[RMDB]
RNA sequence: GGGAACGACUCGAGUAGAGUCGAAAAAAAUUAUGGUCGCCGGCACGUAUGUGCACACCGAGAAUGACACUCUUUCGCCGUCAACCGUGUCGGUAGUCUUGCACAUCAGGAAUCCGUCUGCCUUGAACGGUUACUGUUAGUUCGCUAACAGUAACCGAAAAGAAACAACAACAACAAC
Reactivity to 2A3 in 0.01 (KOAc 150mM, MgCl2 10mM, bicine 150mM(pH8.5), 24C), signal-to-noise 2, nucleotides 027 to 126: a000a000a000u250u130a120u090g010g000u000c050g030c000c000g030g010c000a040c060g100u090a040u200g070u050g020c010a000c000a000c030c010g030a020g060a080a110u110g080a020c030a040c080u030c000u040u190u120c080g030c070c040g060u060c010a050a040c090c020g070u010g020u060c000g020g000u010a050g020u000c020u060u050g030c050a040c010a090u050c010a050g080g060a040a070u010c010c000g020u000c060u050g000c000c000u010u040g030a070a020
Reactivity to DMS in 0.01 (KOAc 150mM, MgCl2 10mM, bicine 150mM(pH8.5), 24C), signal-to-noise 2, nucleotides 027 to 126: a060a030a070u000u000a060u000g000g000u000c080g010c050c010g020g050c070a050c050g000u000a020u000g010u000g040c010a050c110a100c160c030g000a050g020a090a060u020g000a090c090a100c080u010c080u000u000u000c060g000c130c100g000u000c040a050a060c110c040g000u000g020u000c020g000g030u020a050g000u010c100u000u000g010c050a030c110a010u020c060a040g000g010a100a070u000c020c040g020u000c020u000g000c020c000u000u010g000a080a190